[RMDB]
RNA sequence: GGGAACGACUCGAGUAGAGUCGAAAAGAAAGAAAAAGAAAUCAUGAAAUGCGGUCAACCGUCAGAAUUUCGGACGGAAAUACGACAUUAAGCAGAAAGCCGGCCGCAAUGUCGUUUAAGAAGAAAAAGCCUAGGAUUAUUUCGAUAAUCCUAGGCUAAAAGAAACAACAACAACAAC
Reactivity to 2A3 in 0.01 (KOAc 150mM, MgCl2 10mM, bicine 150mM(pH8.5), 24C), signal-to-noise 1, nucleotides 027 to 126: g020a000a100a020g030a030a080a000a000a010g070a060a060a010u080c070a040u140g060a000a030a090u200g100c020g000g000u070c070a070a030c000c000g000u000c000a000g150a250a180u060u300u090c030g010g000a000c000g010g000a110a000a000u180a070c000g000a000c000a000u000u150a070a060g030c010a000g140a230a050a000g030c040c050g010g010c000c000g010c070a000a010u000g000u010c000g000u090u110u030a080a160g010a140a000g020a050a030a080a030
Reactivity to DMS in 0.01 (KOAc 150mM, MgCl2 10mM, bicine 150mM(pH8.5), 24C), signal-to-noise 1, nucleotides 027 to 126: g020a100a110a140g000a060a090a030a070a100g010a050a050a070u010c040a020u010g020a100a060a030u030g000c040g000g000u020c070a080a050c020c000g000u020c000a050g000a130a130u000u020u070c030g060g040a020c100g000g010a000a090a060u010a100c180g050a020c000a080u020u040a070a070g000c070a170g010a050a120a060g000c080c100g010g040c010c000g000c090a030a030u000g010u000c030g060u000u010u010a100a140g000a180a030g000a000a060a040a050